[RMDB]
RNA sequence: GGGAACGACUCGAGUAGAGUCGAAAAUGGAAUACCCUUCCAAUGAGAGCGGAGAUAUGCAGAGGCUCGGGGACUGGAGAAGAUUUUUCAGGGAUGUGGGUCGGAAAGCAGCACGCACGAGGUGUCGUGCAAGCGAUAUGUUCGCAUAUCGCUUGCAAAAAGAAACAACAACAACAAC
Reactivity to DMS in 0.01 (KOAc 150mM, MgCl2 10mM, bicine 150mM(pH8.5), 24C), signal-to-noise 6, nucleotides 027 to 126: u000g000g010a090a050u010a180c060c050c050u010u000c010c020a100a120u010g010a120g020a050g020c060g020g000a090g010a120u000a050u000g010c090a100g010a180g010g010c040u000c060g020g020g010g020a110c090u000g000g010a070g010a080a120g000a110u020u000u000u000u000c050a080g010g010g000a080u010g020u000g000g000g010u000c070g000g000a080a040a070g010c040a070g000c040a050c080g000c060a050c060g010a100g000g010u000g010u000c070g010
Reactivity to 2A3 in 0.01 (KOAc 150mM, MgCl2 10mM, bicine 150mM(pH8.5), 24C), signal-to-noise 2, nucleotides 027 to 126: u080g010g020a030a060u160a200c020c000c000u030u000c030c030a060a110u170g050a070g010a000g070c010g130g050a040g020a060u170a060u210g030c040a030g060a050g140g000c040u030c100g040g000g010g020a070c030u060g050g010a050g000a120a000g030a060u080u060u030u130u130c060a030g000g050g000a040u120g080u120g110g030g030u070c020g020g020a050a070a040g030c010a020g000c020a000c040g010c010a010c070g040a060g010g080u060g060u120c070g030
Chemical mapping of a 177-nucleotide RNA with DMS and 2A3. It was measured as part of the RMDB library OK2TRN. The reactions ran in a buffer of 150 mM KOAc, 10 mM MgCl2 and 150 mM bicine (pH 8.5), at 24 C. 2A3 adducts were read by reverse transcription with SuperScript II with manganese.